This 207-nucleotide RNA was probed chemically with 2A3 and DMS. Reactivities are rounded to 0.1 and cut off at 0 and 3. The data come from the RNA Mapping Database (RMDB), library OK3TST. 2A3 adducts were read by reverse transcription with SuperScript II with manganese. High 2A3 reactivity points to a flexible backbone, as in loops and unpaired stretches.

RNA sequence: GGGAACGACUCGAGUAGAGUCGAAAAACUGCGCGAUGAUUAUGUUGAAAAAGAUCGAAGCCGCGGUAUCUUUUUCACUCAAGAUUGGGUCUCACUACCUGGUGUUCUGCCUGUGGCUUCAGGGGGUAUUCACGUUUGGCAUAUGCCUGCUUUGACCCAUGGGCUCUAUAUUCGUAUAGAGCCCAUGAAAAGAAACAACAACAACAAC
Reactivity to 2A3 in 0.01 (KOAc 150mM, MgCl2 10mM, bicine 150mM(pH8.5), 24C), signal-to-noise 2, nucleotides 027 to 156: a020c050u070g000c040g000c020g060a060u060g020a030u080u140a040u170g090u100u100g010a020a010a040a060a050g010a010u020c040g060a080a020g080c130c100g000c050g030g000u050a070u070c030u040u070u000u020u050c050a010c040u040c040a050a050g000a170u030u120g020g030g020u040c010u010c060a040c060u020a020c000c030u040g000g040u050g050u060u030c040u050g050c000c020u060g030u030g030g000c000u060u080c050a020g010g000g020g000g000u040a040u000u100c040a020c070g050u040u000u090g020g010c030a030u080a040u280g000c010c020u040g020c020u130u060u070g030a050c000c000
Reactivity to DMS in 0.01 (KOAc 150mM, MgCl2 10mM, bicine 150mM(pH8.5), 24C), signal-to-noise 1, nucleotides 027 to 156: a070c020u020g020c040g020c000g000a130u000g000a120u010u000a050u000g020u000u010g000a050a010a050a090a090g000a030u000c040g000a110a200g040c040c010g020c050g000g020u000a030u010c010u000u000u010u010u010c040a020c070u000c090a050a130g000a110u000u000g010g010g000u000c010u000c060a060c050u000a090c020c030u010g000g000u000g010u000u000c050u000g020c040c010u010g000u010g030g020c050u000u020c010a100g020g000g050g030g020u000a040u000u010c070a060c100g010u000u010u010g000g040c030a140u000a080u010g010c030c040u000g000c030u010u000u000g000a230c080c030